[RMDB]
Structure probing data (DMS and 2A3) for a 177-nucleotide construct.
Conditions: 150 mM KOAc, 10 mM MgCl2 and 150 mM bicine (pH 8.5), 24 C.
It was measured as part of the RMDB library OK2TRN.
The DMS profile rests on 2,826 reads.
RNA sequence: GGGAACGACUCGAGUAGAGUCGAAAAUCAAUACCUCAAAUUUUAUUAAUGCUAUUUGGAUCUACUUUAAUUAUGGGUGGCGCAUGUGCGUUAAAUAAUUAUUACGACCAAGAUAUUGAUCGUAUUACGAUUAGGCAAUAUUCGUAUUGCCUAAUCGAAAAGAAACAACAACAACAAC
Reactivity to DMS in 0.01 (KOAc 150mM, MgCl2 10mM, bicine 150mM(pH8.5), 24C), signal-to-noise 3, nucleotides 027 to 126: u000c080a090a080u000a110c040c040u010c070a050a060a130u020u000u010u000a070u010u000a080a060u010g000c040u000a050u000u010u010g020g000a160u000c030u000a050c050u000u000u010a050a070u000u000a070u000g000g000g050u010g010g040c190g010c030a080u000g030u010g010c020g010u000u020a010a040a050u000a040a020u000u000a070u000u010a040c030g020a010c030c020a020a030g010a130u000a060u010u000g000a010u000c030g000u000a030u010u000a150
Reactivity to 2A3 in 0.01 (KOAc 150mM, MgCl2 10mM, bicine 150mM(pH8.5), 24C), signal-to-noise 4, nucleotides 027 to 126: u070c010a050a030u080a140c010c010u120c020a160a250a180u100u220u150u210a130u090u170a120a030u110g010c020u040a110u200u090u080g040g040a100u020c010u040a060c050u090u090u130a180a090u100u120a130u160g060g020g070u070g030g000c020g050c060a050u170g070u100g090c020g000u000u010a140a050a010u050a010a010u050u030a030u110u000a030c050g000a020c010c010a030a000g060a120u140a100u110u070g010a030u040c020g010u050a040u060u080a040